[RMDB]
RNA sequence: GGGAACGACUCGAGUAGAGUCGAAAAACUGGAUAUUCAAGGGUUUACGAGCAGAAAUGGUAUGAUUGCAAGGUUCGAAACUAAUUAAAUACCCUAGCGCUUAAAGACACUCACCUCCCGCAAAAACCGUAGCUAUAUGGUUCGCCAUAUAGCUACGAAAAGAAACAACAACAACAAC
Reactivity to 2A3 in 0.01 (KOAc 150mM, MgCl2 10mM, bicine 150mM(pH8.5), 24C), signal-to-noise 1, nucleotides 027 to 126: a000c010u000g010g010a010u040a070u150u110c040a070a030g010g050g020u000u040u030a110c040g020a030g010c040a020g040a130a120a000u150g050g020u180a020u170g080a140u070u100g020c020a040a060g000g000u000u160c080g050a110a020a040c020u000a000a080u120u080a170a100a020u030a020c030c000c000u000a010g010c030g000c050u000u040a170a000a000g020a000c010a010c030u040c010a040c010c000u000c020c030c020g020c020a100a200a040a030a010c060
Reactivity to DMS in 0.01 (KOAc 150mM, MgCl2 10mM, bicine 150mM(pH8.5), 24C), signal-to-noise 1, nucleotides 027 to 126: a090c040u010g020g010a100u000a060u000u000c080a100a050g000g010g010u000u000u000a060c170g010a010g020c000a030g000a130a050a090u010g030g000u000a030u010g020a010u000u000g010c050a070a050g000g010u000u010c090g000a070a050a030c040u010a040a100u000u000a020a060a060u010a050c010c030c040u000a070g000c190g000c040u000u000a060a110a090g000a110c050a010c020u000c040a100c030c000u010c020c020c000g000c250a050a000a070a090a070c150
Chemical mapping of a 177-nucleotide RNA with 2A3 and DMS. The reactions ran in a buffer of 150 mM KOAc, 10 mM MgCl2 and 150 mM bicine (pH 8.5), at 24 C.